[RMDB]
RNA sequence: GGGAACGACUCGAGUAGAGUCGAAAAGUGCUUGUCCUUACAUAGUCCUGCAUCAUGUUCUGCUGCUGACUGAGGUAGCCGUAGAACUGGAAGUACUGCGAGGCGGACGACUCCUCAGUGCGCUGCGCGAGCGACGGCAUUUCGAUGCCGUCGCUCGAAAAGAAACAACAACAACAAC
Reactivity to 2A3 in 0.01 (KOAc 150mM, MgCl2 10mM, bicine 150mM(pH8.5), 24C), signal-to-noise 2, nucleotides 027 to 126: g020u040g040c020u050u030g020u130c010c000u110u040a100c070a090u090a060g020u070c000c030u050g030c030a150u050c030a010u200g030u090u000c000u010g000c000u000g000c000u030g090a060c060u060g050a100g020g050u060a000g000c020c020g010u000a020g000a030a000c000u030g030g060a010a000g030u020a050c080u040g060c100g090a040g060g000c070g000g070a090c030g080a110c020u040c030c000u040c000a060g010u040g120c020g000c010u000g080c000g010

Notes: The record gives the reactivity of an RNA of 177 nucleotides to 2A3. Values are in units of 0.01, from 0 to 300, in steps of 10. It was measured as part of the RMDB library OK1LIB. Reactivities are given for positions 27 through 126. The RNA was probed in 150 mM KOAc, 10 mM MgCl2 and 150 mM bicine (pH 8.5) at 24 C.